[RMDB]
RNA sequence: GGGAACGACUCGAGUAGAGUCGAAAAAAAGAUAAACAAUUUCAUUGGCGGGCCACUCCUGGUAACACGUCGGCUAGUUCAUCUGGAUCUGAUGUUGAUAAUGAUUUUGUUAAUCUAGCCGGUGGUAACGUAAAUUCACUUUCGAGUGAAUUUACGUAAAAGAAACAACAACAACAAC
Reactivity to DMS in 0.01 (KOAc 150mM, MgCl2 10mM, bicine 150mM(pH8.5), 24C), signal-to-noise 2, nucleotides 027 to 126: a060a070a100g000a120u000a060a070a100c030a070a060u000u000u010c060a060u010u000g020g020c030g020g000g020c080c040a020c120u000c020c030u000g010g000u010a060a090c080a100c010g020u000c020g010g000c010u010a020g010u010u000c100a040u000c010u010g000g000a030u000c030u020g010a100u010g010u000u010g020a100u000a070a100u000g010a040u000u000u000u010g010u000u000a040a040u010c010u000a030g020c020c000g010g030u000g000g010u010a090
Reactivity to 2A3 in 0.01 (KOAc 150mM, MgCl2 10mM, bicine 150mM(pH8.5), 24C), signal-to-noise 2, nucleotides 027 to 126: a020a000a000g110a070u230a080a090a010c050a110a100u050u150u240c040a050u060u170g050g050c040g010g040g000c010c000a010c020u020c000c040u070g010g010u030a090a000c030a000c100g020u030c050g000g000c030u010a010g030u060u060c030a100u060c040u070g070g000a030u000c030u070g080a160u190g090u280u100g080a100u080a170a030u060g040a000u010u000u020u000g070u070u030a030a050u050c010u020a000g000c020c010g000g030u050g010g100u060a020